Source: RMDB library TTRDES, as collected in RNAgym. This 177-nucleotide RNA was probed chemically with 2A3 and DMS. For DMS the reverse transcriptase was MarathonRT. For 2A3 the reverse transcriptase was SuperScript II with manganese. The RNA was probed in 150 mM KOAc, 10 mM MgCl2 and 150 mM bicine (pH 8.5) at 24 C.
RNA sequence: GGGAACGACUCGAGUAGAGUCGAAAAGAUAUGGAUCCAUACAGCUUUUGACGCCUGUAUGGGUCGGAAACGACCCGAAGGGCGAUAAGCUGUGGAUCCUAAGUCAAAAGAUGCCUUCGGGCAUCAACGUUUUAAGAUUGUUCGCAAUCUUAAAACGAAAAGAAACAACAACAACAAC
Reactivity to 2A3 in 0.01 (KOAc 150mM, MgCl2 10mM, bicine 150mM(pH8.5), 24C), signal-to-noise 5, nucleotides 027 to 126: g040a010u070a030u190g000g000a000u010c010c020a030u130a300c030a030g010c010u140u170u200u220g300a230c090g010c030c060u180g040u120a140u300g000g000g000u010c000g010g010a000a010a010c010g010a000c000c000c000g020a100a060g020g020g000c010g030a030u020a040a000g000c000u000g000u000g010g000a000u000c000c010u010a110a000g040u000c040a000a040a040a220g010a000u010g010c020c000u040u110c300g080g000g000c000a010u000c000a000a010
Reactivity to DMS in 0.01 (KOAc 150mM, MgCl2 10mM, bicine 150mM(pH8.5), 24C), signal-to-noise 6, nucleotides 027 to 126: g000a050u000a300u010g010g000a010u000c000c000a100u010a190c030a000g020c000u000u000u010u010g030a250c090g010c010c000u000g000u010a250u010g000g000g020u000c000g000g000a100a070a230c000g010a010c000c000c010g010a170a300g000g000g030c000g010a080u000a010a020g010c000u000g020u000g000g000a000u000c000c010u000a020a070g010u010c030a090a100a120a110g000a020u000g010c000c010u000u000c210g040g010g000c000a000u000c000a040a130